[RMDB]
RNA sequence: GGGAACGACUCGAGUAGAGUCGAAAAGAUAUGGAUGCCUCAUACAGCGAGGAUCUCGGAAACGAGGGAGCUGGUGAUGGCAUCCUAAGUCAAAACAAGUGAGUUGUCUUCGGACAACUCACUUGAACCUUCAUAAAACCUUCGGGUUUUAUGAAGGAAAAGAAACAACAACAACAAC
Reactivity to DMS in 0.01 (KOAc 150mM, MgCl2 10mM, bicine 150mM(pH8.5), 24C), signal-to-noise 2, nucleotides 027 to 126: g000a040u000a300u000g000g010a000u000g010c000c000u000c000a010u000a090c000a010g020c010g000a070g030g000a030u000c000u000c000g000g000a150a110a250c000g010a010g000g010g010a030g040c000u000g000g040u010g010a050u010g020g000c000a000u000c010c010u000a010a090g000u000c030a070a060a100a170c020a000a000g010u010g010a020g020u000u000g010u000c010u010u010c160g010g000a010c000a000a000c000u000c000a010c000u010u000g000a030a170
Reactivity to 2A3 in 0.01 (KOAc 150mM, MgCl2 10mM, bicine 150mM(pH8.5), 24C), signal-to-noise 2, nucleotides 027 to 126: g030a020u090a060u140g010g000a000u000g020c010c000u040c020a040u300a300c020a010g000c010g090a250g000g030a000u000c010u000c000g040g000a140a070a040c020g000a010g000g010g000a010g000c000u000g040g000u030g000a170u300g020g000c000a000u000c000c000u000a010a000g000u000c020a020a000a120a210c010a000a020g000u000g000a020g010u030u000g000u000c040u080u190c300g020g010a010c000a000a000c000u010c000a000c000u010u000g010a000a000